[RMDB]
RNA sequence: GGGAACGACUCGAGUAGAGUCGAAAAGCUCAUUUCUGUAAUCCCAGCACUUUGAGAGACCAAGGCUGGCGGAUUGCUUGAGCCCGUGAGUUCGAGACCAGCCUGGGCAACACAGCAAGACCUCAUCUCUACAAAAAACACAAAAAUUUGUCAGGCAACGUCCAAAAUUAUUCGUAAUUUUGGACGUAAAAGAAACAACAACAACAAC
Reactivity to 2A3 in 0.01 (KOAc 150mM, MgCl2 10mM, bicine 150mM(pH8.5), 24C), signal-to-noise 3, nucleotides 027 to 156: g000c000u010c030a040u040u170u130c080u050g090u090a050a100u060c010c010c000a010g010c030a060c080u080u110u090g120a190g000a030g030a070c040c040a030a030g030g000c020u000g020g000c050g040g040a060u020u060g020c000u010u010g000a000g040c000c010c080g100u080g040a100g000u080u110c070g000a020g030a120c010c010a000g000c000c000u020g000g030g000c020a030a040c080a010c030a060g060c030a060a030g030a100c010c020u050c030a090u000c040u000c000u080a040c090a020a100a040a030a040a020c120a030c040a020a070a120a050a090u150u070u090g020u060c050a010g050g030c010a020
Reactivity to DMS in 0.01 (KOAc 150mM, MgCl2 10mM, bicine 150mM(pH8.5), 24C), signal-to-noise 1, nucleotides 027 to 156: g010c000u020c030a080u000u020u010c010u030g010u000a080a100u000c000c000c010a190g010c040a030c080u000u000u010g010a080g030a180g000a090c040c030a030a040g020g030c000u010g040g010c110g010g000a130u000u000g000c020u010u000g000a080g060c010c030c100g020u030g030a120g030u010u010c030g000a100g020a040c020c010a090g000c020c000u000g010g010g000c000a050a070c020a120c060a050g010c040a150a090g020a070c020c000u000c020a080u000c040u000c020u010a130c060a000a020a070a050a060a100c040a130c080a030a060a040a040a050u000u000u000g000u010c060a040g010g010c040a150